[RMDB]
RNA sequence: GGGAACGACUCGAGUAGAGUCGAAAAAUCGUGCGGUUAUAUACCGACGCCCACAAUUCGUGUUGCUCACUUUUCUUUUUCUUUUUCCAUGGAAUGGUUUGAGCGUCAUACGUGGGCCAGAGCCAUAAAACUGAACUUCCUUCGGGAAGUUCAGUUUAAAAGAAACAACAACAACAAC
Reactivity to DMS in 0.01 (KOAc 150mM, MgCl2 10mM, bicine 150mM(pH8.5), 24C), signal-to-noise 1, nucleotides 027 to 126: a010u060c060g040u030g000c000g030g030u000u030a120u040a180u020a060c000c000g030a030c050g030c000c000c020a100c040a090a170u030u010c000g060u000g040u020u010g050c000u000c070a080c140u000u010u020u000c000u000u000u000u000u000c040u000u000u000u020u010c050c070a110u030g000g000a070a040u010g010g010u000u010u010g000a020g040c050g000u050c070a000u020a270c100g040u000g000g000g000c030c090a080g000a080g000c090c010a120u010a090
Reactivity to 2A3 in 0.01 (KOAc 150mM, MgCl2 10mM, bicine 150mM(pH8.5), 24C), signal-to-noise 2, nucleotides 027 to 126: a000u140c110g000u190g060c000g000g000u110u190a290u000a000u120a170c000c000g030a040c060g010c000c010c000a030c020a000a100u290u300c270g000u010g000u050u300g040c000u000c000a080c000u030u000u120u030c020u040u300u100u030u100c060u040u140u100u210u040c050c080a020u030g040g010a010a020u010g120g100u080u050u170g000a060g000c000g000u010c030a000u080a170c090g000u040g000g030g000c060c000a070g010a010g000c010c000a000u100a060

The data come from the RNA Mapping Database (RMDB), library RFM100. Structure probing data (DMS and 2A3) for a 177-nucleotide construct. Values cover nucleotides 27 to 126. For 2A3, 401 sequencing reads were counted. For DMS, 1,507 sequencing reads were counted. The RNA was probed in 150 mM KOAc, 10 mM MgCl2 and 150 mM bicine (pH 8.5) at 24 C. DMS adducts were read by reverse transcription with MarathonRT. For 2A3 the reverse transcriptase was SuperScript II with manganese.